This 207-nucleotide RNA was probed chemically with 2A3 and DMS. Values cover nucleotides 27 to 156. For DMS, 6,478 sequencing reads were counted. Reactivities are rounded to 0.1 and cut off at 0 and 3. 2A3 adducts were read by reverse transcription with SuperScript II with manganese. The RNA was probed in 150 mM KOAc, 10 mM MgCl2 and 150 mM bicine (pH 8.5) at 24 C.

[RMDB]
RNA sequence: GGGAACGACUCGAGUAGAGUCGAAAAUCGCGUUGGCUGCCUAAUUCAAGGAAUUAGCGUGCCUUCAUGCUAAGGGUUUGAUAUCUGCUAAAACCCGGUGCAUUCAACAAUGCAGGUUAAGCCAAAGAAACGGCUCACGAAUUCGUUCGUGAGCCAACUAAAAUAUAGAAUUCGUUCUAUAUUUUAGAAAAGAAACAACAACAACAAC
Reactivity to 2A3 in 0.01 (KOAc 150mM, MgCl2 10mM, bicine 150mM(pH8.5), 24C), signal-to-noise 4, nucleotides 027 to 156: u080c020g000c040g010u000u010g020g010c050u080g050c050c020u010a010a010u040u010c110a240a120g180g030a080a030u020u010a030g010c070g060u060g000c020c000u000u020c030a020u050g000c000u010a010a070g010g000g000u010u000u000g010a020u020a030u100c040u060g010c010u020a020a030a010a030c010c010c010g000g000u010g000c020a060u100u270c020a060a080c030a180a090u180g010c000a010g030g030u080u150a100a030g010c060c040a130a120a020g100a050a140a020c150g020g000c000u000c000a000c000g010a030a030u110u110c200g040u100u000c010g010u030g030a010g000c000c000a000a000
Reactivity to DMS in 0.01 (KOAc 150mM, MgCl2 10mM, bicine 150mM(pH8.5), 24C), signal-to-noise 3, nucleotides 027 to 156: u000c060g000c070g000u000u010g010g050c030u000g020c090c010u000a040a080u010u020c040a190a220g020g010a090a060u000u000a030g030c070g010u000g010c020c050u000u000c050a080u000g020c040u000a300a230g010g010g030u000u000u000g000a160u000a050u000c040u000g000c070u000a170a030a010a040c010c010c000g000g030u000g020c020a060u010u010c080a090a140c110a100a110u000g020c030a040g000g000u000u010a090a100g000c010c000a040a100a160g000a060a100a120c100g010g030c000u000c000a010c000g020a030a080u000u010c240g000u000u000c000g020u000g000a000g010c000c030a000a030